Structure probing data (DMS and 2A3) for a 177-nucleotide construct. The DMS profile rests on 3,524 reads. The 2A3 profile rests on 5,133 reads. The RNA was probed in 150 mM KOAc, 10 mM MgCl2 and 150 mM bicine (pH 8.5) at 24 C. For DMS the reverse transcriptase was MarathonRT. Source: RMDB library OK2TRN, as collected in RNAgym.
RNA sequence: GGGAACGACUCGAGUAGAGUCGAAAAGGAUCCUCUCACAGGAUUGUCUCAGUGUUCCGAAACUCCAACAGUAUUGCUUCGGGACACCUACAGCAAUACUGUAGGUAUUGAGAGUAGGAGAGGAUCGGUAUGCGUUUUAGUUCGCUAAAACGCAUACAAAAGAAACAACAACAACAAC
Reactivity to DMS in 0.01 (KOAc 150mM, MgCl2 10mM, bicine 150mM(pH8.5), 24C), signal-to-noise 4, nucleotides 027 to 126: g010g000a020u000c000c000u000c000u000c020a170c100a130g010g010a120u000u000g020u000c010u000c010a060g000u010g010u010u000c020c020g010a030a030a070c070u010c190c130a100a110c200a140g010u010a190u000u000g010c040u000u000c110g000g020g010a040c140a070c000c000u000a040c080a020g000c050a050a110u020a300c020u000g010u000a020g000g000u000a050u000u000g000a040g000a030g000u000a100g000g010a010g000a010g010g010a010u000c010g030
Reactivity to 2A3 in 0.01 (KOAc 150mM, MgCl2 10mM, bicine 150mM(pH8.5), 24C), signal-to-noise 4, nucleotides 027 to 126: g070g000a010u000c000c010u000c000u010c000a230c040a100g180g110a230u130u240g160u040c000u010c020a020g010u010g030u050u000c010c010g010a010a020a020c050u110c080c040a130a090c040a220g070u140a160u110u200g010c010u000u020c000g020g000g010a020c000a020c030c000u000a000c010a020g040c030a040a150u070a300c010u010g000u010a010g000g040u040a110u090u100g030a030g000a010g060u130a070g000g080a000g000a000g010g000a000u000c010g010